The data come from the RNA Mapping Database (RMDB), library OK3TST. This 207-nucleotide RNA was probed chemically with 2A3 and DMS. 2A3 is a SHAPE reagent: it acylates the 2'-hydroxyl of flexible nucleotides of all four kinds. The RNA was probed in 150 mM KOAc, 10 mM MgCl2 and 150 mM bicine (pH 8.5) at 24 C.

[RMDB]
RNA sequence: GGGAACGACUCGAGUAGAGUCGAAAAGAAUGCUUUGGUUUCAAGGCUCUUCUAGGAUGGCCUGUCUGCAGUGCUGCCCACUCCCUUGGCAGAACCCUCUGCAUUUGACUCCAUGUGCUCAUGGCUGUGAGCCCUGUCUUCCACUGAAUUCCAAGCCACUACGACUAUCUUUCGAGAUAGUCGUAGUAAAAGAAACAACAACAACAAC
Reactivity to 2A3 in 0.01 (KOAc 150mM, MgCl2 10mM, bicine 150mM(pH8.5), 24C), signal-to-noise 4, nucleotides 027 to 156: g040a050a070u170g010c060u050u020u030g030g000u090u230u180c020a010a010g000g000c000u000c010u010u000c020u020a040g030g040a120u060g040g020c020c060u030g020u070c030u070g000c020a010g010u010g050c020u010g000c020c020c020a060c050u060c000c020c000u060u080g020g000c000a030g020a150a120c050c000c020u020c020u020g010c030a080u060u050u170g050a040c010u030c040c020a060u080g070u090g060c020u030c070a020u070g110g040c070u080g050u020g070a000g010c000c000c020u050g030u070c040u050u030c020c020a050c060u060g040a030a040u100u030c040c030a040a030g050c010c070
Reactivity to DMS in 0.01 (KOAc 150mM, MgCl2 10mM, bicine 150mM(pH8.5), 24C), signal-to-noise 1, nucleotides 027 to 156: g000a130a110u010g020c000u010u000u000g030g030u000u010u000c010a030a050g030g020c020u000c080u000u010c010u000a050g020g010a120u010g020g000c030c020u010g020u010c060u010g000c000a080g030u000g020c030u000g030c000c000c020a060c040u000c010c010c020u000u000g010g000c030a080g000a060a140c050c010c040u000c060u010g010c010a110u010u000u000g000a080c020u000c020c030a120u000g020u000g010c000u000c030a090u010g020g020c100u010g010u000g000a120g030c020c030c030u010g010u000c040u000u010c010c000a110c040u000g010a110a150u000u010c020c020a050a080g010c090c110